[RMDB]
RNA sequence: GGGAACGACUCGAGUAGAGUCGAAAAAGGUCCUGUUCGCAGGACCUCAAAUGUCCUAAGUCCCAUUCCAGAGUACGAUAAGUGAUCGGAAACGAUCACUUUUGACGUACGACGAAGGAAUGGGAUAUGGAAAUCGGCAACAGUUUCGACUGUUGAAGAUUAUAGCGCCAUUCGUGGCGCUAUAAUCAAAAGAAACAACAACAACAAC
Reactivity to 2A3 in 0.01 (KOAc 150mM, MgCl2 10mM, bicine 150mM(pH8.5), 24C), signal-to-noise 3, nucleotides 027 to 156: a010g020g000u010c010c000u000g020u040u080c300g030c030a010g010g000a000c000c000u040c000a010a030a040u190g050u060c000c000u030a110a060g010u000c000c000c000a000u000u000c000c000a010g000a010g050u000a000c000g000a030u030a080a010g000u010g010a010u000c020g010g060a060a090a060c000g000a000u010c020a010c000u030u000u010u000g070a030c010g000u010a000c020g030a050c040g060a070a050g000g010a000a010u000g000g000g010a000u000a000u020g000g030a020a160a060u140c120g120g000c020a000a000c000a020g010u020u110u190c140g140a050c010u000g000u020u010g000a050a010
Reactivity to DMS in 0.01 (KOAc 150mM, MgCl2 10mM, bicine 150mM(pH8.5), 24C), signal-to-noise 2, nucleotides 027 to 156: a020g060g010u000c000c000u000g020u000u020c290g070c020a000g040g010a000c000c010u010c010a040a100a150u000g040u000c000c040u010a130a200g020u000c000c000c000a040u020u000c000c000a090g000a300g010u000a030c010g010a110u010a010a020g010u000g010a000u000c000g010g010a230a120a240c020g000a010u000c000a020c020u000u000u000u050g010a220c090g010u000a010c000g020a250c160g000a210a240g010g000a030a010u020g000g000g000a010u000a010u000g010g000a030a110a050u000c030g020g000c030a020a010c000a010g000u000u000u000c190g000a120c000u000g020u000u000g000a060a150